[RMDB]
RNA sequence: GGGAACGACUCGAGUAGAGUCGAAAACAUCCAAUCGGGUAAUGAUGCGUGUGUAGCGAUGGCAGAGCACGUCGCAGGGACUGAAGAUGCGUUUGUUGACCUGAUGAACGCUUGGGCAAGCUCACUACCUAUAUACCCACUUCGGUGGGUAUAUAGGAAAAGAAACAACAACAACAAC
Reactivity to DMS in 0.01 (KOAc 150mM, MgCl2 10mM, bicine 150mM(pH8.5), 24C), signal-to-noise 8, nucleotides 027 to 126: c150a110u010c030c030a100a110u000c090g010g000g000u000a070a080u000g020a060u000g020c060g030u000g010u000g010u010a120g010c020g010a060u000g020g020c030a120g010a140g020c060a050c050g020u000c050g010c030a100g000g010g010a080c080u000g000a080a080g010a080u010g000c030g010u000u000u000g010u010u000g010a120c110c060u000g000a040u000g010a040a040c050g000c020u000u000g010g010g010c070a060a080g000c040u000c040a080c150u010a140
Reactivity to 2A3 in 0.01 (KOAc 150mM, MgCl2 10mM, bicine 150mM(pH8.5), 24C), signal-to-noise 7, nucleotides 027 to 126: c010a020u040c030c010a020a090u080c040g040g020g030u080a090a060u120g110a030u100g020c030g010u050g010u020g060u120a040g020c020g030a060u070g070g000c050a040g020a020g160c060a010c070g020u020c010g000c010a020g040g050g030a040c030u070g040a060a010g070a090u090g020c020g030u010u040u050g080u030u070g160a230c010c050u070g020a020u030g010a040a010c020g010c060u050u070g030g030g000c050a050a020g020c010u010c010a050c020u060a050
An RNA of 177 nucleotides, treated with DMS and 2A3 and read out base by base. Source: RMDB library OK2TST, as collected in RNAgym. Conditions: 150 mM KOAc, 10 mM MgCl2 and 150 mM bicine (pH 8.5), 24 C.